Source: RMDB library TTRDES, as collected in RNAgym. The record gives the reactivity of an RNA of 177 nucleotides to DMS and 2A3. For DMS the reverse transcriptase was MarathonRT. The reactions ran in a buffer of 150 mM KOAc, 10 mM MgCl2 and 150 mM bicine (pH 8.5), at 24 C.
RNA sequence: GGGAACGACUCGAGUAGAGUCGAAAAGAUAUGGAUAAGGAAGCCUCUCCCCACCCAUAUUCGGAAACGAAUAUGGAGGAGGAACUACUUCAGCUUAUCCUAAGUCAAAAGCUGCCUUCGGGCAGCACAGAUGGGGAUAGUUCGCUAUCCCCAUCUGAAAAGAAACAACAACAACAAC
Reactivity to DMS in 0.01 (KOAc 150mM, MgCl2 10mM, bicine 150mM(pH8.5), 24C), signal-to-noise 2, nucleotides 027 to 126: g000a080u000a300u000g000g000a000u000a020a010g020g000a020a010g000c070c160u010c050u000c050c010c000c000a300c170c000c000a000u000a010u010u010c000g000g000a160a120a200c010g020a020a000u000a000u000g010g010a100g020g020a030g020g000a040a010c040u020a160c010u000u000c000a140g030c000u000u000a000u000c000c000u020a060a190g010u000c100a070a090a180a140g010c000u000g000c000c000u000u000c240g010g020g000c000a000g030c000a080
Reactivity to 2A3 in 0.01 (KOAc 150mM, MgCl2 10mM, bicine 150mM(pH8.5), 24C), signal-to-noise 1, nucleotides 027 to 126: g040a010u160a110u230g010g030a040u000a020a000g050g000a000a020g000c030c000u000c010u050c030c030c010c000a020c000c000c000a000u020a020u000u010c020g040g000a060a050a020c010g000a000a000u010a000u030g000g030a020g000g000a030g020g040a050a030c140u300a040c010u180u030c020a150g110c050u000u000a010u030c010c000u020a220a020g130u210c030a000a000a080a290g000c050u000g000c000c000u010u080c220g120g000g000c000a000g040c000a000